RNA sequence: GGGAACGACUCGAGUAGAGUCGAAAAGGCAGGAAUAGAAUGGGCCGAAUCUAGUGUGACACUGCAGGCCAAAAGCUAUUUUUGUUUGGCACAAGGCCUGGUGGCUGAGGCGGCUGUGUUCACCAAGCAAUAUUAAAAAUUUCGAUUUUUAAUAUUGAAAAGAAACAACAACAACAAC
Reactivity to DMS in 0.01 (KOAc 150mM, MgCl2 10mM, bicine 150mM(pH8.5), 24C), signal-to-noise 7, nucleotides 027 to 126: g010g000c020a060g000g010a120a110u020a080g000a120a120u030g000g000g000c010c020g010a110a100u030c060u020a070g010u030g020u000g010a040c010a010c010u000g010c030a040g010g020c000c010a010a070a100a040g000c010u000a010u020u010u040u030u050g010u020u010u010g000g010c020a120c190a110a170g010g020c000c000u000g010g010u010g000g000c000u010g010a300g000g000c000g000g000c020u010g000u000g000u020u010c010a020c020c050a140a100g010
Reactivity to 2A3 in 0.01 (KOAc 150mM, MgCl2 10mM, bicine 150mM(pH8.5), 24C), signal-to-noise 5, nucleotides 027 to 126: g010g000c040a020g060g110a090a080u130a150g080a090a080u140g050g040g000c000c000g010a000a020u070c030u050a070g080u030g010u020g200a010c020a000c020u070g000c030a030g010g120c000c000a040a190a020a000g000c000u000a060u050u080u010u070u100g250u140u160u130g010g000c030a040c060a170a020g160g000c000c010u000g010g010u020g000g000c000u010g000a010g020g000c000g000g010c000u020g010u020g000u070u060c020a010c030c000a010a000g040

The data come from the RNA Mapping Database (RMDB), library OK1LIB. Chemical mapping of a 177-nucleotide RNA with DMS and 2A3. The 2A3 profile rests on 4,808 reads. As a SHAPE reagent, 2A3 marks flexible, mostly unpaired nucleotides at the ribose 2'-OH. 2A3 adducts were read by reverse transcription with SuperScript II with manganese.